[RMDB]
RNA sequence: GGGAACGACUCGAGUAGAGUCGAAAAGUGCAAAACAGACACGCUGGAGCUUCGUGUUUGCAGAGCUUCAUGCUUCAGUUGGUACCCCGUGAGGCUUGUGUGGGCAGCUGUUCAGAAACCUCAAUUGGGAACAAUUAAUGUUCGCAUUAAUUGUUCCAAAAGAAACAACAACAACAAC
Reactivity to 2A3 in 0.01 (KOAc 150mM, MgCl2 10mM, bicine 150mM(pH8.5), 24C), signal-to-noise 3, nucleotides 027 to 126: g030u030g000c030a000a030a200a060c040a050g110a040c010a010c060g010c000u040g020g010a020g030c000u090u100c090g070u070g120u150u110u300g040c050a020g010a010g080c000u040u030c020a050u130g000c030u050u040c030a080g000u060u120g060g020u120a100c000c000c020c020g050u030g040a040g080g000c060u110u040g070u040g010u090g090g010g000c010a010g070c050u060g010u040u010c030a020g040a130a080a060c000c010u040c070a050a110u110u150g120
Reactivity to DMS in 0.01 (KOAc 150mM, MgCl2 10mM, bicine 150mM(pH8.5), 24C), signal-to-noise 5, nucleotides 027 to 126: g020u000g020c050a050a060a070a090c060a090g000a080c240a050c090g020c050u000g000g000a030g000c050u010u000c060g040u010g010u000u000u000g020c040a080g000a130g010c010u000u010c050a030u010g020c030u010u000c050a070g030u000u000g010g010u000a070c040c020c020c060g010u000g010a060g000g010c050u000u000g010u010g020u000g020g010g000c030a080g020c060u010g000u000u000c040a080g000a080a060a080c040c030u000c050a060a170u010u010g010

Conditions: 150 mM KOAc, 10 mM MgCl2 and 150 mM bicine (pH 8.5), 24 C. An RNA of 177 nucleotides, treated with 2A3 and DMS and read out base by base.